RNA sequence: GGGAACGACUCGAGUAGAGUCGAAAAGUAUAUUCGUCCUUGCACCGAGCGCUGGACAUUGAGUGAGGGAUGGCUCACUCACAGGAACCUCACAGUCUGGGAGUGAGGGAUGGUCCAUCCCGAUCUGCAGAGUGAGGGAUGGACGCCGAGUACUAGCCGGUGCGUGUUCUUUCGAGAACACGCACCGAAAAGAAACAACAACAACAAC
Reactivity to 2A3 in 0.01 (KOAc 150mM, MgCl2 10mM, bicine 150mM(pH8.5), 24C), signal-to-noise 2, nucleotides 027 to 156: g090u020a020u010a010u160u140c090g020u000c030c060u030u070g030c050a090c100c100g040a030g030c100g000c010u030g030g020a040c080a020u070u060g010a010g040u020g000a010g000g020g060a180u150g170g010c010u000c000a000c000u000c020a010c020a010g100g010a030a070c000c060u090c030a070c030a100g110u120c070u160g020g020g020a090g000u010g030a010g010g010g050a100u060g120g110u000c000c000a000u000c020c000c000g030a020u000c010u020g170c140a090g030a030g300u010g010a020g010g030g000a000u010g040g000a000c010g010c010c010g010a000g030u050a040c050u030a000g050c020
An RNA of 207 nucleotides, treated with 2A3 and read out base by base. The 2A3 profile rests on 658 reads. Conditions: 150 mM KOAc, 10 mM MgCl2 and 150 mM bicine (pH 8.5), 24 C.